The record gives the reactivity of an RNA of 177 nucleotides to 2A3 and DMS. The RNA was probed in 150 mM KOAc, 10 mM MgCl2 and 150 mM bicine (pH 8.5) at 24 C. It was measured as part of the RMDB library OK2TST. For DMS, 13,609 sequencing reads were counted. For DMS the reverse transcriptase was MarathonRT.
[RMDB]
RNA sequence: GGGAACGACUCGAGUAGAGUCGAAAAUCUGGGCAAUACCCGCAUCAUCGGCCAGUCCGGCGCUGGUAAAACUGUCCUGAUGAACUUCUGCCUCGCGCAAGCGCAGAAGUAUUUGCACAAUGCUCCAUACUUUUAGGUGAUUCGUCACCUAAAAGUAAAAAGAAACAACAACAACAAC
Reactivity to 2A3 in 0.01 (KOAc 150mM, MgCl2 10mM, bicine 150mM(pH8.5), 24C), signal-to-noise 6, nucleotides 027 to 126: u010c010u030g000g000g000c000a020a040u030a130c000c000c020g000c010a050u070c010a020u050c030g010g000c040c040a050g060u080c040c020g040g020c050g010c040u060g020g080u110a120a130a040a090c040u020g000u010c010c030u040g010a020u030g010a020a020c000u000u010c000u010g020c000c020u040c040g100c010g000c120a080a010g020c030g000c090a000g000a010a000g000u020a130u030u090u110g000c030a030c040a110a120u110g010c010u010c050c010a040
Reactivity to DMS in 0.01 (KOAc 150mM, MgCl2 10mM, bicine 150mM(pH8.5), 24C), signal-to-noise 9, nucleotides 027 to 126: u000c080u000g020g010g010c020a060a080u000a110c090c040c070g010c090a230u010c080a050u000c020g010g010c050c060a080g010u010c090c060g010g000c140g000c030u000g010g010u010a050a050a100a080c100u000g010u000c020c000u010g010a030u000g000a080a050c000u000u000c000u000g010c020c090u000c150g020c080g020c160a090a070g000c160g010c000a010g000a020a010g010u000a030u000u010u010g020c040a080c120a050a090u000g000c030u000c020c090a200